[RMDB]
RNA sequence: GGGAACGACUCGAGUAGAGUCGAAAAGAUAUGGAGCGAUACCAGACAUGCCUCCGGAUCGGAAACGAUCCGUAGGCAACAGCUGGUUCGCUCCUAAGUCAAACCGGCAGCCUUCGGGCUGCCGGAAGAUUACAUAGACCUUCGGGUCUAUGUAAUCAAAAGAAACAACAACAACAAC
Reactivity to 2A3 in 0.01 (KOAc 150mM, MgCl2 10mM, bicine 150mM(pH8.5), 24C), signal-to-noise 1, nucleotides 027 to 126: g010a010u020a020u040g030g010a010g000c010g010a020u090a200c020c000a010g050a060c140a180u300g000c000c000u100c020c000g030g000a010u000c000g000g000a000a000a000c020g000a000u010c000c010g010u000a020g020g010c030a030a010c040a040g010c000u000g050g000u000u000c000g000c000u000c000c010u000a020a000g000u010c010a010a050a060c000c000g050g090c080a010g040c020c040u230u300c300g160g020g060c030u030g000c040c040g000g000a010a000
Reactivity to DMS in 0.01 (KOAc 150mM, MgCl2 10mM, bicine 150mM(pH8.5), 24C), signal-to-noise 1, nucleotides 027 to 126: g000a010u000a060u000g000g000a010g020c010g000a010u040a000c010c010a010g000a040c100a130u030g020c010c000u010c080c000g000g000a000u000c010g020g000a020a010a050c010g010a000u000c000c010g050u000a010g010g040c000a010a000c100a120g040c000u010g000g010u000u000c000g010c010u000c000c010u010a000a040g000u000c000a080a190a280c010c000g070g000c000a020g000c010c000u020u010c280g020g050g060c010u010g030c010c020g000g000a000a040